About this RNA
This 177-nucleotide RNA was probed chemically with DMS and 2A3. It was measured as part of the RMDB library OK2TST. The DMS profile rests on 3,919 reads. The 2A3 profile rests on 5,224 reads. For DMS the reverse transcriptase was MarathonRT.
RNA sequence: GGGAACGACUCGAGUAGAGUCGAAAACUGCACCUGGACAGCGAACUCGACGGUGCCGAAGCGCGCUGGUCGGCGGGCUUCCGCCUGAGUGUGGCGCCGGUUGCCGCAGCGCCGCCGCUGGCCGCGAGACGAUGGAAAAUUUCGAUUUUCCAUCGUCAAAAGAAACAACAACAACAAC
Reactivity to DMS in 0.01 (KOAc 150mM, MgCl2 10mM, bicine 150mM(pH8.5), 24C), signal-to-noise 3, nucleotides 027 to 126: c070u000g020c100a070c090c070u000g000g000a070c050a020g010c020g000a210a110c050u000c000g010a150c170g010g010u000g000c110c090g000a060a070g010c020g010c020g000c010u010g000g020u020c160g000g000c000g000g000g010c060u000u000c040c040g000c010c000u010g010a110g010u010g010u000g000g010c230g020c030c020g000g000u010u010g020c060c080g020c100a080g000c020g010c020c010g010c080c020g000c030u000g000g010c010c010g010c120g000a170
Reactivity to 2A3 in 0.01 (KOAc 150mM, MgCl2 10mM, bicine 150mM(pH8.5), 24C), signal-to-noise 3, nucleotides 027 to 126: c030u080g030c020a070c050c060u060g030g020a010c010a020g020c020g040a070a060c030u020c050g040a050c110g090g030u040g040c050c050g030a020a010g030c130g000c000g000c080u090g070g210u240c140g010g000c000g000g120g020c000u130u000c010c000g000c000c010u110g030a060g010u130g010u030g010g010c000g000c000c030g050g020u110u190g130c020c020g000c030a050g000c010g010c010c020g000c020c010g000c010u020g020g000c000c000g010c000g010a070